[RMDB]
RNA sequence: GGGAACGACUCGAGUAGAGUCGAAAAGGAGUGGUUCAGGGAGGACAGAGAAGGAGAGAUCUCAGGGUCAUGCUUGCAAGUUGGAAGGUUGGGAUUCCCUGCCGACCAGUGUCAGACAACCAAAUCCUAACCAGCUGAAAUCAAACAGUGCAAUGUACGGGAAGAAAUAUUUCGAUAUUUCUUCCCGAAAAGAAACAACAACAACAAC
Reactivity to 2A3 in 0.01 (KOAc 150mM, MgCl2 10mM, bicine 150mM(pH8.5), 24C), signal-to-noise 5, nucleotides 027 to 156: g050g020a030g040u050g010g040u090u130c100a040g020g040g010a050g000g010a020c040a060g020a000g020a040a010g020g030a030g000a000g000a050u000c060u030c080a040g050g000g000u070c040a040u100g040c030u070u050g030c040a090a110g020u070u020g050g030a100a060g030g000u020u010g010g010g010a040u040u080c030c010c010u010g020c010c010g040a070c000c050a050g010u030g030u100c030a020g010a090c030a020a050c030c030a040a020a060u030c010c000u030a030a050c020c010a010g000c030u060g030a050a040a070u160c060a020a040a090c020a020g080u070g060c030a030a040u210g010u170a060
Reactivity to DMS in 0.01 (KOAc 150mM, MgCl2 10mM, bicine 150mM(pH8.5), 24C), signal-to-noise 1, nucleotides 027 to 156: g020g010a090g000u000g020g000u020u020c110a120g030g020g000a040g020g000a100c020a090g010a090g010a050a030g020g000a060g000a120g000a060u000c040u010c000a110g000g040g030u000c050a120u000g000c070u010u010g000c000a050a190g020u000u000g000g010a060a120g010g000u020u030g010g010g010a150u000u010c020c010c020u030g000c020c000g020a070c000c030a130g000u000g010u010c030a090g020a080c040a030a120c020c030a030a030a060u000c000c010u000a010a100c020c000a220g020c000u020g000a070a090a110u000c060a080a090a130c040a080g030u010g000c020a020a060u000g010u020a210

The record gives the reactivity of an RNA of 207 nucleotides to 2A3 and DMS. Values cover nucleotides 27 to 156. The DMS profile rests on 2,527 reads. 2A3 adducts were read by reverse transcription with SuperScript II with manganese. The reactions ran in a buffer of 150 mM KOAc, 10 mM MgCl2 and 150 mM bicine (pH 8.5), at 24 C.